[RMDB]
RNA sequence: GGGAACGACUCGAGUAGAGUCGAAAAAAAUGAGCCAUGAAAUAAAAAGAACGACAAUUCCACAAGAAAACACGCACCAGGGUCCGUCGUUCCAGUCCUUUCUAAGUGACUCUGCUUGUGGUACAGCGCGGUUGCGAAAUUUCGAUUUCGCAACCGCAAAAGAAACAACAACAACAAC
Reactivity to 2A3 in 0.01 (KOAc 150mM, MgCl2 10mM, bicine 150mM(pH8.5), 24C), signal-to-noise 2, nucleotides 027 to 126: a000a000a070u150g000a050g000c000c020a030u100g110a000a040a080u220a000a200a030a080a000g170a070a000c020g120a050c050a090a300u130u010c130c000a100c020a040a000g090a030a160a060a080c160a000c000g090c000a030c010c020a000g000g040g000u030c030c020g000u000c010g020u000u000c000c020a000g150u060c020c000u060u090u000c050u120a120a080g000u040g120a000c000u000c030u010g060c050u100u030g000u070g020g010u050a070c000a060g000c030